[RMDB]
RNA sequence: GGGAACGACUCGAGUAGAGUCGAAAAAAAAGAUAUGGACUAGCGAAGGGAAAGGCCGUACGUUGAAACGUCUCGGAAACGAGACGUGGAGUACGGCUUUCUGUUGACGCUAGUCCUAAGUCAAAAACUAUAAAAGACACUUCGGUGUCUUUUAUAGAAAAGAAACAACAACAACAAC
Reactivity to DMS in 0.01 (KOAc 150mM, MgCl2 10mM, bicine 150mM(pH8.5), 24C), signal-to-noise 2, nucleotides 027 to 126: a110a020a100a060g020a030u000a300u010g010g010a000c000u000a010g010c020g030a300a170g000g000g000a010a010a020g000g000c010c000g030u010a000c000g000u010u000g000a140a170a010c000g010u000c000u010c010g000g010a080a090a160c000g000a010g010a010c010g000u000g020g000a060g000u000a010c000g000g020c000u000u010u000c000u000g020u000u000g040a300c060g020c000u000a000g010u000c010c000u000a010a040g010u000c020a070a080a060a140a140